[RMDB]
An RNA of 177 nucleotides, treated with DMS and read out base by base. The RNA was probed in 150 mM KOAc, 10 mM MgCl2 and 150 mM bicine (pH 8.5) at 24 C.
RNA sequence: GGGAACGACUCGAGUAGAGUCGAAAAGAUAUGGACAGAGUAGGGAGUAACAUGUGAAUCUUCUGAAAUUCGGAAACGAAUUUCAGAAGAUUCACAUGAAUUACGAAGAACUACCUGUCCUAAGUCACAUCGUUAACAGGUUCGCCUGUUAACGAUGAAAAGAAACAACAACAACAAC
Reactivity to DMS in 0.01 (KOAc 150mM, MgCl2 10mM, bicine 150mM(pH8.5), 24C), signal-to-noise 1, nucleotides 027 to 126: g000a050u020a300u020g010g000a000c010a020g000a250g010u000a010g000g000g000a180g020u020a010a050c030a040u010g000u030g020a010a000u000c010u000u000c000u000g000a010a020a020u000u000c000g030g000a090a130a210c000g000a030a000u000u000u000c040a010g000a000a000g020a000u000u000c000a010c000a010u000g000a060a120u000u000a010c020g000a170a190g010a200a210c030u000a000c000c020u000g000u000c000c000u000a040a060g040u010c060a300

Source: RMDB library TTRINS, as collected in RNAgym.